Source information
Source: RMDB library OK2TRN, as collected in RNAgym. Structure probing data (DMS and 2A3) for a 177-nucleotide construct.
RNA sequence: GGGAACGACUCGAGUAGAGUCGAAAAAUGUUUUCUGCUGGAAUAUCAACGUGAUCGAAGAAAUUACGGUGCAUAAAGCUGUAGUAGCUUUCCGGAUGCUCUUUCGGCAGACCGACAUAUUCGUCCAAGUUUUCACUGAGUUCGCUCAGUGAAAACUAAAAGAAACAACAACAACAAC
Reactivity to DMS in 0.01 (KOAc 150mM, MgCl2 10mM, bicine 150mM(pH8.5), 24C), signal-to-noise 2, nucleotides 027 to 126: a000u010g000u000u010u010u000c010u000g000c010u000g000g000a010a040u000a030u010c030a050a090c030g010u000g030a090u030c130g010a090a020g000a020a060a020u000u000a030c030g010g000u000g030c170a130u000a070a100a140g010c000u000g010u000a050g020u000a050g030c000u000u010u000c130c040g010g010a100u010g030c090u000c060u000u020u000c010g000g000c030a000g000a040c270c140g000a030c000a010u000a060u000u000c130g000u000c040c040a070
Reactivity to 2A3 in 0.01 (KOAc 150mM, MgCl2 10mM, bicine 150mM(pH8.5), 24C), signal-to-noise 1, nucleotides 027 to 126: a000u030g000u010u000u020u020c020u030g020c010u020g000g030a030a030u070a050u150c000a040a020c030g040u150g020a040u060c080g060a050a030g020a060a130a010u010u020a020c030g050g020u040g010c060a110u130a140a110a010g000c000u000g010u100a030g020u010a010g070c000u050u030u000c000c000g010g060a120u020g020c000u030c010u020u000u000c010g000g020c000a000g000a000c050c070g040a000c010a000u060a030u140u130c100g070u050c010c000a000
For DMS the reverse transcriptase was MarathonRT.
The DMS profile rests on 1,397 reads.
The RNA was probed in 150 mM KOAc, 10 mM MgCl2 and 150 mM bicine (pH 8.5) at 24 C.
Values cover nucleotides 27 to 126.